[RMDB]
RNA sequence: GGGAACGACUCGAGUAGAGUCGAAAAACAGAGAUAACGACACGGUUGGUCUACUCACGCUACAGAACAAGCACUUGAGUGUAGAAGGGGACUGCGUGACCAUUCGUUUCCGUGGGAAGGAUCGUGUGGAACACGAGUUCAUGGUACGCAACGGUGAUACCCAUGAAGCAUUCGUGCUUCAUGGGUAAAAAGAAACAACAACAACAAC
Reactivity to 2A3 in 0.01 (KOAc 150mM, MgCl2 10mM, bicine 150mM(pH8.5), 24C), signal-to-noise 4, nucleotides 027 to 156: a010c050a000g070a020g030a040u080a150a060c070g080a020c040a040c060g070g010u060u100g000g080u030c040u050a030c010u050c030a050c090g030c060u150a080c020a080g080a160a010c030a170a010g050c010a060c050u090u110g020a020g040u020g010u070a030g050a200a030g040g020g030g000a000c000u020g040c080g000u010g000a000c000c000a010u030u020c010g050u150u190u020c010c000g020u120g040g070g090a040a100g010g010a020u030c000g010u010g020u030g030g020a050a040c000a000c000g000a010g010u030u050c020a060u090g070g030u050a030c050g010c050a030a020c030g050g010u000g000a040
Reactivity to DMS in 0.01 (KOAc 150mM, MgCl2 10mM, bicine 150mM(pH8.5), 24C), signal-to-noise 1, nucleotides 027 to 156: a210c040a050g000a140g010a090u010a050a160c060g000a170c050a030c080g020g030u000u010g020g030u020c020u000a060c020u000c040a070c030g020c030u010a160c060a120g020a070a090c080a040a130g000c000a070c060u000u000g030a220g040u000g000u000a080g040a070a040g010g060g000g000a080c060u030g020c020g000u000g000a300c010c000a040u020u000c030g040u000u000u000c000c000g010u020g040g000g000a160a150g010g000a060u020c030g090u000g000u020g000g050a060a300c010a000c000g010a040g000u000u000c000a020u000g010g020u000a040c080g020c070a040a070c020g000g030u000g010a150
Source: RMDB library OK3TST, as collected in RNAgym. The record gives the reactivity of an RNA of 207 nucleotides to 2A3 and DMS. Values cover nucleotides 27 to 156. For DMS the reverse transcriptase was MarathonRT. For 2A3, 1,880 sequencing reads were counted. The reactions ran in a buffer of 150 mM KOAc, 10 mM MgCl2 and 150 mM bicine (pH 8.5), at 24 C.